Annotation
Chemical mapping of a 177-nucleotide RNA with DMS and 2A3. For DMS, 2,159 sequencing reads were counted. The data come from the RNA Mapping Database (RMDB), library TTRDEL.

[RMDB]
RNA sequence: GGGAACGACUCGAGUAGAGUCGAAAAGAUAUGGAAGCCGUAACAUCGAACUACGACUUAAGGGUCGGAAACGACCCGGAGGUCGCGUGGGCUUCCUAAGUCAAAUCCGGAACUUCGGUUCCGGAAAGAAAUGCUAAUGGUUCGCCAUUAGCAUUUCAAAAGAAACAACAACAACAAC
Reactivity to DMS in 0.01 (KOAc 150mM, MgCl2 10mM, bicine 150mM(pH8.5), 24C), signal-to-noise 3, nucleotides 027 to 126: g000a080u000a300u010g000g010a030a010g000c000c010g030u010a090a160c130a150u000c110g030a070a100c140u000a160c020g010a000c000u000u000a300a230g000g000g000u000c000g000g000a040a110a180c030g000a010c000c000c020g000g000a120g000g000u000c000g010c120g000u010g020g000g000c010u000u000c010c000u000a010a070g000u010c040a070a100a180u000c000c000g020g020a000a000c000u010u010c210g010g010u000u000c020c000g000g000a020a020a050
Reactivity to 2A3 in 0.01 (KOAc 150mM, MgCl2 10mM, bicine 150mM(pH8.5), 24C), signal-to-noise 2, nucleotides 027 to 126: g010a040u070a040u180g010g010a030a000g020c020c050g070u200a090a090c050a250u300c080g040a110a110c080u220a090c300g020a010c000u050u050a030a030g000g000g020u010c010g000g060a060a040a020c000g000a000c000c030c000g010g000a010g000g000u030c000g030c020g010u030g040g000g000c020u020u030c000c000u020a090a000g040u010c050a010a040a170u000c000c000g010g000a010a010c020u070u130c290g130g000u000u000c000c000g000g000a000a000a020